[RMDB]
RNA sequence: GGGAACGACUCGAGUAGAGUCGAAAAUUGCUCAAUGCUGACCUCAAUCGUCUUGCUGAUUACCUCAAUCCUGACCCGAAAAAAUUGCAAGCCAAAGGCAUCACGUCAGUACGGUCGCGCGUGACUAAUGGCGACAAGUAUUCGUACUUGUCGCCAUAAAAGAAACAACAACAACAAC
Reactivity to 2A3 in 0.01 (KOAc 150mM, MgCl2 10mM, bicine 150mM(pH8.5), 24C), signal-to-noise 2, nucleotides 027 to 126: u050u040g010c020u010c030a010a060u130g030c010u010g040a070c020c020u100c090a040a140u070c010g020u000c070u070u080g000c000u020g000a080u060u100a070c000c000u010c000a010a040u030c020c010u000g070a040c010c030c000g130a070a090a020a010a010a050u210u100g040c040a040a020g040c010c030a070a040a020g040g010c000a010u030c030a010c030g000u000c040a050g050u080a110c070g040g050u000c040g000c010g050c020g070u040g080a020c010u060a090
Reactivity to DMS in 0.01 (KOAc 150mM, MgCl2 10mM, bicine 150mM(pH8.5), 24C), signal-to-noise 2, nucleotides 027 to 126: u000u000g000c020u020c070a100a150u000g030c040u000g020a050c040c020u000c030a090a110u000c140g000u000c040u000u000g010c040u030g000a050u000u000a050c110c010u000c010a050a110u000c020c040u000g000a130c020c020c040g020a000a050a030a060a080a070u010u020g000c090a080a040g000c050c080a040a100a110g030g020c060a080u010c030a030c060g020u020c060a070g010u000a090c260g000g000u000c020g000c080g010c100g000u000g040a080c090u000a090